RNA sequence: GGGAACGACUCGAGUAGAGUCGAAAAUAGGGCGAAUAACCGCAUCGCGGUUAUCCGCCGGCUGUGCAGGGCAGCGGCCCUUGCCCGGAUUUUGGGCAGCGUGCACCAGCAGGCGACAAAUCGGCAUAGUAAGAACUAAGUUCGCUUAGUUCUUACUAAAAGAAACAACAACAACAAC
Reactivity to DMS in 0.01 (KOAc 150mM, MgCl2 10mM, bicine 150mM(pH8.5), 24C), signal-to-noise 7, nucleotides 027 to 126: u030a100g000g010g020c010g030a030a010u010a010a000c000c010g020c010a130u030c290g010c010g010g010u000u000a000u000c010c010g010c000c000g000g010c020u000g010u010g020c050a100g000g010g020c010a140g000c050g010g010c010c010c010u000u010g010c000c020c020g010g010a150u010u010u020u010g010g000g010c010a050g000c050g010u020g000c010a090c090c050a100g010c010a170g000g000c030g010a100c140a010a070a080u020c040g000g010c130a160u010
Reactivity to 2A3 in 0.01 (KOAc 150mM, MgCl2 10mM, bicine 150mM(pH8.5), 24C), signal-to-noise 9, nucleotides 027 to 126: u170a030g030g000g030c000g000a010a000u010a010a000c010c010g010c090a170u170c260g010c000g000g000u000u000a000u010c010c000g000c000c000g000g010c020u040g020u060g040c030a080g020g040g000c030a120g100c040g130g020c030c000c000u020u060g020c010c010c000g090g040a190u150u170u160u250g020g010g000c010a010g020c050g100u080g000c010a070c060c000a020g010c010a010g030g050c020g020a050c050a040a080a070u130c040g040g010c030a030u030